RNA sequence: GGGAACGACUCGAGUAGAGUCGAAAAUAAGCACCUCGUUAGGUGAGGCGGCUACACGAACAUAGGCCACUGACCCCGAACGUCGAGAGACGCCCCGGGUCAGGACAGCACUUCCCGGCUUAAGGGUAAAAUCACAACGUCUUCGGACGUUGUGAAAGGAAUCAAAUAUCUUCGGAUAUUUGAUUCCAAAAGAAACAACAACAACAAC
Reactivity to 2A3 in 0.01 (KOAc 150mM, MgCl2 10mM, bicine 150mM(pH8.5), 24C), signal-to-noise 3, nucleotides 027 to 156: u180a030a010g000c010a020c020c000u010c030g120u120u300a170g000g130u170g060a010g010g040c090g040g000c020u110a040c090a020c120g130a190a020c060a160u200a070g110g000c020c010a030c030u000g000a000c010c010c000c050g020a080a020c010g000u000c000g010a030g010a000g010a190c000g020c010c010c030c000g010g010g000u000c000a000g010g020a010c060a010g000c000a010c030u020u010c000c000c000g010g010c030u130u140a070a050g040g000g020u100a060a080a040a130u020c010a000c000a000a000c000g000u000c000u040u070c170g040g010a000c000g000u000u000g000u000g000a010a000a000
Reactivity to DMS in 0.01 (KOAc 150mM, MgCl2 10mM, bicine 150mM(pH8.5), 24C), signal-to-noise 1, nucleotides 027 to 156: u000a070a100g010c000a070c020c020u020c070g020u010u020a110g010g040u000g030a020g020g060c020g060g020c000u000a060c100a120c050g010a080a180c030a140u000a070g010g030c000c000a100c000u000g010a010c000c000c000c050g050a070a060c010g000u000c010g000a300g010a300g020a030c000g010c000c010c090c220g000g040g020u000c020a020g010g010a070c020a150g000c030a120c020u000u000c000c000c020g040g040c000u000u020a050a060g010g030g020u020a030a080a080a150u000c000a000c000a010a000c000g000u010c010u000u020c260g030g020a000c020g030u000u000g010u010g020a000a040a060

An RNA of 207 nucleotides, treated with 2A3 and DMS and read out base by base. The reactions ran in a buffer of 150 mM KOAc, 10 mM MgCl2 and 150 mM bicine (pH 8.5), at 24 C. For DMS, 1,939 sequencing reads were counted. Source: RMDB library M2RFPK, as collected in RNAgym. The 2A3 profile rests on 2,210 reads.